RNA sequence: GGGAACGACUCGAGUAGAGUCGAAAACGUCCCCGUCGUACAGAAUGGUAACAUAUCUCUCCAAAUAUCUGAGCUGGGGUAUACGGGGAAACCCAACCCCUUGGGAAGAUUGGGUAUAUGGCUAAAUUACAUCGAUUGUACUUCGGUACAAUCGAAACUAAGUCAAAAAGUUCGCUUUUUGACUUAGAAAAGAAACAACAACAACAAC
Reactivity to DMS in 0.01 (KOAc 150mM, MgCl2 10mM, bicine 150mM(pH8.5), 24C), signal-to-noise 2, nucleotides 027 to 156: c050g010u000c000c010c020c090g000u000c080g030u020a200c040a150g020a140a100u000g000g010u000a100a090c050a060u000a080u000c030u000c020u010c010c030a060a160a140u000a060u000c040u010g010a290g010c080u010g040g000g050g010u000a040u000a060c040g030g020g000g000a110a040a180c000c000c000a070a050c030c000c010c030u000u000g010g000g010a100a050g010a090u000u010g000g000g000u000a060u000a060u000g000g010c060u000a090a060a110u010u010a070c070a130u010c010g000a040u000u000g020u000a010c000u000u000c190g040g010u000a000c000a010a010u000c000g010a000a040a170
Reactivity to 2A3 in 0.01 (KOAc 150mM, MgCl2 10mM, bicine 150mM(pH8.5), 24C), signal-to-noise 4, nucleotides 027 to 156: c050g080u040c000c000c000c020g150u110c040g020u080a070c050a060g140a140a140u140g040g050u110a140a020c010a030u070a030u030c090u010c020u030c070c020a110a140a090u190a130u070c030u060g030a010g090c050u030g010g000g000g020u050a040u020a090c060g020g000g000g000a040a040a040c010c000c000a000a030c000c000c030c020u000u030g030g010g020a020a020g030a070u030u040g010g010g010u030a040u010a020u030g030g030c030u050a090a120a120u170u120a050c050a090u030c010g010a000u000u000g000u000a000c000u020u060c180g050g000u010a000c000a000a000u000c000g000a000a000a000